[RMDB]
This 177-nucleotide RNA was probed chemically with 2A3 and DMS. The RNA was probed in 150 mM KOAc, 10 mM MgCl2 and 150 mM bicine (pH 8.5) at 24 C. It was measured as part of the RMDB library OK2TST. DMS adducts were read by reverse transcription with MarathonRT. 2A3 adducts were read by reverse transcription with SuperScript II with manganese.
RNA sequence: GGGAACGACUCGAGUAGAGUCGAAAACGCGCCUCUGGGCGGACGUGAUCUCCUUCUGCGAGUCCUACAUCGGCAUCCCCCGUGGGAGCUCCUGUGUGACAAUUCUGAUCGAGACCGUCGGAGGAGCAUGACCAAAUCAUUUCGAUGAUUUGGUCAUAAAAGAAACAACAACAACAAC
Reactivity to 2A3 in 0.01 (KOAc 150mM, MgCl2 10mM, bicine 150mM(pH8.5), 24C), signal-to-noise 3, nucleotides 027 to 126: c020g000c000g020c000c020u040c080u180g170g040g040c000g020g020a020c040g140u170g100a130u040c010u000c030c000u020u040c030u030g050c060g080a040g020u010c010c010u030a010c010a080u080c040g050g000c040a300u050c010c020c000c010c030g040u300g010g000g020a010g010c010u020c030c000u000g010u000g000u030g010a000c010a010a040u210u000c030u040g030a030u020c010g010a010g020a030c010c000g000u000c010g000g000a000g000g000a000g030c000
Reactivity to DMS in 0.01 (KOAc 150mM, MgCl2 10mM, bicine 150mM(pH8.5), 24C), signal-to-noise 4, nucleotides 027 to 126: c080g020c030g010c010c010u010c090u000g030g030g000c050g010g000a090c130g010u000g000a210u000c020u000c010c010u000u010c020u000g000c100g000a300g000u000c010c010u010a060c040a010u000c100g020g000c070a160u000c010c010c000c130c280g020u000g000g010g020a110g000c020u000c040c010u000g020u010g000u000g010a040c050a070a210u010u000c060u000g000a060u000c140g000a050g000a080c060c030g010u000c050g020g000a020g000g020a040g030c080